[RMDB]
RNA sequence: GGGAACGACUCGAGUAGAGUCGAAAAUUCUUUUGCGUUUAUGCAGCUUACUGUGCAAUUAAUGGUAAAAUGGAUUUUGAGAACAUAUGGAAUUGCAGAGGUGGUACAGCCAGUGCAGCGAAUAUGGCAUAGCAGAACGGUUCGCCGUUCUGCUAUGAAAAGAAACAACAACAACAAC
Reactivity to DMS in 0.01 (KOAc 150mM, MgCl2 10mM, bicine 150mM(pH8.5), 24C), signal-to-noise 4, nucleotides 027 to 126: u010u000c010u000u000u010u000g010c030g020u000u000u010a080u010g000c020a060g010c140u010u010a090c200u020g020u000g020c010a040a110u010u000a050a040u000g010g010u000a020a020a040a030u010g010g000a040u000u000u000u010g010a150g020a130a090c050a020u000a040u010g010g010a110a080u000u000g010c030a050g010a290g010g030u000g020g030u010a070c190a160g010c020c030a060g010u000g000c030a040g000c050g020a160a040u000a060u000g000g010
Reactivity to 2A3 in 0.01 (KOAc 150mM, MgCl2 10mM, bicine 150mM(pH8.5), 24C), signal-to-noise 3, nucleotides 027 to 126: u000u000c000u020u040u030u020g010c030g000u030u070u040a090u080g000c000a020g010c030u080u100a120c060u140g010u000g120c020a090a180u060u070a150a050u120g190g010u080a060a030a020a040u090g040g010a040u000u020u040u090g130a130g060a080a010c000a010u040a020u100g090g080a060a060u060u000g000c010a020g020a050g120g040u070g010g100u160a090c110a040g000c000c010a060g060u000g050c000a000g000c020g040a020a020u060a030u040g040g020